Background:
The record gives the reactivity of an RNA of 207 nucleotides to DMS and 2A3. Source: RMDB library M2RFPK, as collected in RNAgym.

RNA sequence: GGGAACGACUCGAGUAGAGUCGAAAAAGGCUCUAGAAGGAUAAUAUAGGCACUCCAUACCCUACUCCGACUCAAUACGUCCCCGUCGUACAGAAUGGUAACAUAUCUCUCCAAAUAUCUGAGCUUGAAUACUCACCGUAGUUCGCUACGGUGAGAAGAUUCAAAGAGAGUUCGCUCUCUUUGAAUCAAAAGAAACAACAACAACAAC
Reactivity to DMS in 0.01 (KOAc 150mM, MgCl2 10mM, bicine 150mM(pH8.5), 24C), signal-to-noise 1, nucleotides 027 to 156: a130g000g000c010u000c020u010a100g000a170a220g010g030a100u000a050a140u010a090u020a110g060g030c030a070c110u000c040c070a240u000a080c040c010c000u000a060c180u000c000c000g040a060c030u000c040a060a120u000a110c060g020u010c010c010c000c020g020u000c100g020u030a170c030a060g000a050a120u000g020g010u000a040a080c030a070u000a090u000c020u000c030u020c010c020a020a080a090u000a060u000c020u010g010a090g010c000u000u010g010a130a150u010a120c030u030c000a000c010c000g020u000a030g030u000u010c290g020c000u000a010c000g040g000u000g000a010g000a020a040
Reactivity to 2A3 in 0.01 (KOAc 150mM, MgCl2 10mM, bicine 150mM(pH8.5), 24C), signal-to-noise 1, nucleotides 027 to 156: a010g000g000c030u040c000u060a050g030a060a000g060g000a070u100a140a110u090a140u080a120g090g000c020a010c030u050c030c030a030u070a080c030c000c000u030a030c050u040c030c030g080a040c000u040c050a050a040u120a250c010g050u060c000c000c020c020g120u060c030g000u020a030c010a040g030a070a040u100g030g040u090a100a000c020a030u120a070u100c040u020c020u020c090c050a130a100a100u080a030u020c040u060g020a010g020c030u070u050g070a110a010u090a140c000u000c010a010c020c000g000u010a000g010u030u100c100g000c150u010a000c000g000g000u020g000a000g010a000a000
DMS adducts were read by reverse transcription with MarathonRT. For 2A3, 514 sequencing reads were counted. The reactions ran in a buffer of 150 mM KOAc, 10 mM MgCl2 and 150 mM bicine (pH 8.5), at 24 C.